[RMDB]
RNA sequence: GGGAACGACUCGAGUAGAGUCGAAAAGCUUUUGCAAAGAGUGGCGCUCAAAGAAGAAGGGGGCACAUAUUAUGUCCACAUAUAUUUGUGGGCGCACAAAUAUGUCGGGGCACAGAAUUAUUGUGUGGGAUAAUAUAUAAUUCGUUAUAUAUUAUCCAAAAGAAACAACAACAACAAC
Reactivity to 2A3 in 0.01 (KOAc 150mM, MgCl2 10mM, bicine 150mM(pH8.5), 24C), signal-to-noise 3, nucleotides 027 to 126: g000c010u000u070u170u090g020c030a000a000a030g030a010g000u040g010g020c050g000c010u020c040a100a080a010g110a060a000g020a010a030g030g000g020g010g010c030a000c000a010u050a010u040u050a030u060g000u000c000c000a010c000a010u090a000u020a040u060u070u040g000u000g000g000g000c000g010c010a040c030a000a050a000u020a000u000g010u000c020g000g000g010g000c020a020c000a010g110a080a010u100u040a040u030u080g010u010g010u030g050
Reactivity to DMS in 0.01 (KOAc 150mM, MgCl2 10mM, bicine 150mM(pH8.5), 24C), signal-to-noise 4, nucleotides 027 to 126: g000c030u000u010u010u010g000c120a070a070a070g010a040g010u020g000g020c120g000c070u000c110a090a090a120g010a090a060g000a110a100g000g010g000g010g040c080a040c070a010u000a020u010u010a070u020g010u000c000c000a030c020a020u000a110u030a070u010u000u010g030u010g000g000g010c050g000c130a040c090a060a030a030u000a000u000g010u000c100g010g000g000g000c020a040c070a030g000a040a030u020u020a050u020u020g020u000g010u000g020

Chemical mapping of a 177-nucleotide RNA with 2A3 and DMS.
Values cover nucleotides 27 to 126.
The reactions ran in a buffer of 150 mM KOAc, 10 mM MgCl2 and 150 mM bicine (pH 8.5), at 24 C.
DMS adducts were read by reverse transcription with MarathonRT.
For DMS, 8,009 sequencing reads were counted.